[RMDB]
RNA sequence: GGGAACGACUCGAGUAGAGUCGAAAAAGGAUCAGGGCGAAAGUGAAUUCCACCGGCUGGCCGUUGAUCUGCACACCGGAGUACAUAGCAACCAGACCACCAGCGAUACAACCAAUCGGAAUGGUCAGUAAUCGUAGUGAUUCGUCACUACGAUUACAAAAGAAACAACAACAACAAC
Reactivity to 2A3 in 0.01 (KOAc 150mM, MgCl2 10mM, bicine 150mM(pH8.5), 24C), signal-to-noise 3, nucleotides 027 to 126: a000g050g000a020u030c020a010g040g020g000c030g060a090a020a010g040u050g060a100a130u230u070c050c000a020c030c000g040g020c040u040g150g000c010c000g000u020u030g010a040u010c020u040g010c070a050c000a000c040c020g000g040a060g010u050a040c050a090u090a050g030c020a020a050c030c020a020g030a030c000c010a010c010c020a020g100c010g010a010u050a090c080a100a060c050c030a020a040u030c020g000g050a120a080u050g010g010u030c040a010
Reactivity to DMS in 0.01 (KOAc 150mM, MgCl2 10mM, bicine 150mM(pH8.5), 24C), signal-to-noise 5, nucleotides 027 to 126: a110g010g010a040u010c040a050g000g010g010c010g010a100a120a120g010u010g020a130a160u010u010c100c020a050c030c020g000g020c110u010g000g010c020c030g010u010u010g020a040u010c030u010g020c110a080c080a080c060c020g000g010a090g000u000a080c090a060u000a070g000c040a070a060c060c050a120g000a050c030c000a030c040c050a100g010c030g010a050u010a060c120a070a110c120c090a040a060u010c040g000g000a110a090u000g000g000u000c080a120